[RMDB]
RNA sequence: GGGAACGACUCGAGUAGAGUCGAAAAUACAAGAAGGGGGGACGGAGAAGGCUAUGUUGGCCGGGCGACGGUUGUCCCGGUUUAAGCCUGUAGGCUGGUUUUCCAGGCAAAUCCGGAAGAAAAUGAAUACAUCCAACAGAUUCGUCUGUUGGAUGUAAAAAGAAACAACAACAACAAC
Reactivity to DMS in 0.01 (KOAc 150mM, MgCl2 10mM, bicine 150mM(pH8.5), 24C), signal-to-noise 3, nucleotides 027 to 126: u000a090c140a060a100g020a100a110g000g010g010g020g020g020a060c060g000g000a030g020a090a020g020g010c020u000a060u000g030u000u010g000g000c000c020g010g000g010c300g010a120c120g000g010u020u000g010u000c030c000c010g000g010u000u000u000a070a070g000c000c000u000g010u000a160g010g020c010u000g000g000u000u000u000u010c020c010a110g000g000c020a040a040a120u000c000c010g000g020a120a090g000a060a050a080a060u010g000a090a170